[RMDB]
RNA sequence: GGGAACGACUCGAGUAGAGUCGAAAAACGGGGGGAAAUCGACCGGGUCCCGCAGAACCCGAUGGAGUCCCCCGCCAUCCCCUGACGGAGAAAACUGGUCCCGAUAGGGGCACCCACAAUAGGAUGGAUACGACGUAGUUCGCUACGUCGAAAAGAAACAACAACAACAAC
Reactivity to DMS in 0.01 (KOAc 150mM, MgCl2 10mM, bicine 150mM(pH8.5), 24C), signal-to-noise 9, nucleotides 027 to 129: a160c050g000g000g030g020g060g000a020a040a090u010c030g010a030c050c020g000g010g030u010c050c070c140g030c170a090g030a120a030c020c010c010g010a050u000g000g000a060g010u020c050c000c020c000c000g030c030c010a070u030c000c010c000c020u000g010a130c150g000g000a050g030a090a060a080a090c130u060g030g030u020c020c000c010g010a140u060a090g020g000g000g020c110a030c040c030c030a100c130a080a080u080a030g050g010a020u040g010g000a140u040a130
Reactivity to 2A3 in 0.01 (KOAc 150mM, MgCl2 10mM, bicine 150mM(pH8.5), 24C), signal-to-noise 9, nucleotides 027 to 129: a000c020g000g000g000g000g000g020a020a030a100u010c010g020a010c020c000g010g000g010u030c050c060c040g030c020a030g030a030a000c000c000c000g010a020u040g020g010a010g040u030c000c000c000c000c000g000c010c000a050u040c000c000c000c000u030g020a030c030g060g010a090g080a100a110a070a060c090u160g120g050u050c010c000c010g030a060u150a150g000g000g000g000c000a030c000c010c000a050c020a030a110u150a110g070g010a040u070g020g020a040u080a180
The data come from the RNA Mapping Database (RMDB), library 15KLIB. An RNA of 170 nucleotides, treated with DMS and 2A3 and read out base by base. For DMS, 53,576 sequencing reads were counted. 2A3 adducts were read by reverse transcription with SuperScript II with manganese. High 2A3 reactivity points to a flexible backbone, as in loops and unpaired stretches. Conditions: 150 mM KOAc, 10 mM MgCl2 and 150 mM bicine (pH 8.5), 24 C.